[RMDB]
RNA sequence: GGGAACGACUCGAGUAGAGUCGAAAACUCAAUGUAGGGAAUAACAUUGAAUUGAUACAAAUACCUUUUUCGGUGUAGGGAAAAACACCGAAUUGAUACAAAUACCUUUAUCAAUGUAGGGAAUAACAAAACAGGCAUCGCUUCGGCGAUGCCUGAACCCUGCAUUAAUCUUCGGAUUAAUGCAGGGAAAAGAAACAACAACAACAAC
Reactivity to 2A3 in 0.01 (KOAc 150mM, MgCl2 10mM, bicine 150mM(pH8.5), 24C), signal-to-noise 1, nucleotides 027 to 156: c020u000c010a000a030u030g080u130a120g040g120g120a130a210u100a120a060c020a010u000u000g000a020a040u080u100g040a100u180a190c120a050a110a050u140a050c010c010u000u010u000u000u010c000g000g020u040g010u010a010g000g010g090a080a220a040a000a000c010a000c000c000g000a000a000u000u020g000a000u000a000c020a000a110a000u090a150c010c020u060u060u020a140u030c030a050a050u100g060u070a060g000g000g050a020a120u120a100a020c100a020a010a060a010c000a000g000g110c000a000u000c020g000c030u080u120c130g020g000c000g020a000u000g030c000c000u000g000a000a000
Description: Source: RMDB library M2RFPK, as collected in RNAgym. An RNA of 207 nucleotides, treated with 2A3 and read out base by base. For 2A3 the reverse transcriptase was SuperScript II with manganese. Reactivities are given for positions 27 through 156.